[RMDB]
RNA sequence: GGGAACGACUCGAGUAGAGUCGAAAAUGAAAUAGCGUGUGCAAGACGCUGAUCUUGCCAUGAUCUGGAACUUUAGUGCUGAGGUCCGAGUUCCAGGGUAUCAUGUCCGACCUUAGCACUAAUUAAACGUAGAAAACAGAUUCGUCUGUUUUCUACGAAAAGAAACAACAACAACAAC
Reactivity to 2A3 in 0.01 (KOAc 150mM, MgCl2 10mM, bicine 150mM(pH8.5), 24C), signal-to-noise 7, nucleotides 027 to 126: u110g040a030a020a050u190a070g060c020g010u020g110u140g000c020a000a000g010a010c050g050c300u100g050a280u000c000u010u010g000c000c000a010u030g010a060u020c010u010g020g000a020a020c020u090u130u080a050g000u000g000c000u000g000a000g000g020u030c060c080g040a060g020u020u010c000c010a010g020g010g010u090a080u260c060a070u100g060u020c010c000g010a010c000c000u000u000a000g000c000a000c000u010a010a020u110u140a070a050a010
Reactivity to DMS in 0.01 (KOAc 150mM, MgCl2 10mM, bicine 150mM(pH8.5), 24C), signal-to-noise 4, nucleotides 027 to 126: u000g000a060a110a100u000a090g010c030g040u000g000u020g000c010a020a020g000a020c010g030c280u000g000a110u000c000u000u000g010c000c010a010u000g000a070u000c010u000g000g010a030a040c030u010u000u010a010g010u000g010c000u000g010a010g010g000u000c040c130g010a050g000u000u000c010c010a040g000g000g000u000a060u010c080a050u000g000u010c020c030g000a090c000c000u010u000a010g010c000a020c010u000a010a040u010u010a040a070a190

Source: RMDB library M2PK90, as collected in RNAgym.
Structure probing data (2A3 and DMS) for a 177-nucleotide construct.
The RNA was probed in 150 mM KOAc, 10 mM MgCl2 and 150 mM bicine (pH 8.5) at 24 C.
DMS adducts were read by reverse transcription with MarathonRT.